RNA sequence: GGGAACGACUCGAGUAGAGUCGAAAAGGAACUCGGCAAAAUGCCCCCGUAACUUCGGGAGAAGGGGGGCCAUUCCUGGUGAGAGGACUUGCUCCUCGAGCUGGGGGUGGCCGCAGAGACCAGCGAGACUUACGUUUUUAUUCGUAAAAACGUAAGUAAAAGAAACAACAACAACAAC
Reactivity to DMS in 0.01 (KOAc 150mM, MgCl2 10mM, bicine 150mM(pH8.5), 24C), signal-to-noise 9, nucleotides 027 to 126: g000g010a160a070c020u000c020g010g010c020a060a070a120a150u010g000c020c010c000c000c010g000u010a130a260c050u000u000c040g020g020g010a160g000a040a040g010g010g000g010g000g020c010c010a000u000u000c000c000u000g000g010u000g000a300g000a010g000g010a020c020u010u000g020c230u000c000c000u000c010g000a300g000c000u000g000g000g000g000g020u000g010g000c000c010g010c160a020g000a070g000a300c010c010a100g010c190g010a160g010
Reactivity to 2A3 in 0.01 (KOAc 150mM, MgCl2 10mM, bicine 150mM(pH8.5), 24C), signal-to-noise 4, nucleotides 027 to 126: g040g010a050a040c010u010c040g000g020c050a110a080a040a300u130g020c010c010c000c000c000g050u080a060a080c010u050u060c080g070g040g010a090g020a040a020g020g010g000g000g000g000c000c000a000u010u000c000c000u000g000g000u050g000a040g000a000g010g000a000c030u100u220g040c080u010c000c000u000c000g000a010g000c000u010g000g000g010g000g000u000g010g000c000c000g000c010a020g010a000g010a040c010c010a020g060c050g080a080g030
Annotation: The record gives the reactivity of an RNA of 177 nucleotides to DMS and 2A3. For DMS the reverse transcriptase was MarathonRT. The data come from the RNA Mapping Database (RMDB), library OK2TRN. For 2A3 the reverse transcriptase was SuperScript II with manganese. Conditions: 150 mM KOAc, 10 mM MgCl2 and 150 mM bicine (pH 8.5), 24 C.